[RMDB]
RNA sequence: GGGAACGACUCGAGUAGAGUCGAAAAAGAGUCCUCUGCCUGGGUGUGGCCCCUGACUGCCCAAGGCUCAGCCAACCACUGACUCUGCUACCAAGAGCAUGCCUUUGCCAUUGUGGUCACUGCUGUCGUAUUAAGCGUUUUUCGAAACGCUUAAUACAAAAGAAACAACAACAACAAC
Reactivity to 2A3 in 0.01 (KOAc 150mM, MgCl2 10mM, bicine 150mM(pH8.5), 24C), signal-to-noise 4, nucleotides 027 to 126: a000g070a020g040u010c010c010u000c060u030g020c000c010u020g030g000g000u130g050u060g080g040c020c030c020c020u040g060a040c030u030g010c000c020c020a050a060g020g000c020u020c030a020g010c010c020a010a050c010c010a020c030u020g030a050c010u000c010u050g020c000u070a110c020c040a080a020g020a010g090c030a030u090g020c000c000u070u070u090g020c020c020a080u060u130g080u070g070g030u030c020a010c090u050g000c020u060g060u150c070
Reactivity to DMS in 0.01 (KOAc 150mM, MgCl2 10mM, bicine 150mM(pH8.5), 24C), signal-to-noise 9, nucleotides 027 to 126: a070g010a100g010u000c030c040u000c070u000g000c050c020u000g000g010g020u010g020u010g010g000c030c020c030c050u000g000a080c050u010g010c020c010c030a080a100g000g010c030u000c060a050g000c030c060a090a120c070c040a130c070u000g000a070c030u000c020u000g010c060u000a100c080c080a080a080g010a060g020c060a060u010g000c030c030u000u000u000g010c040c040a110u000u010g020u000g010g010u000c040a060c090u000g000c050u000g010u010c130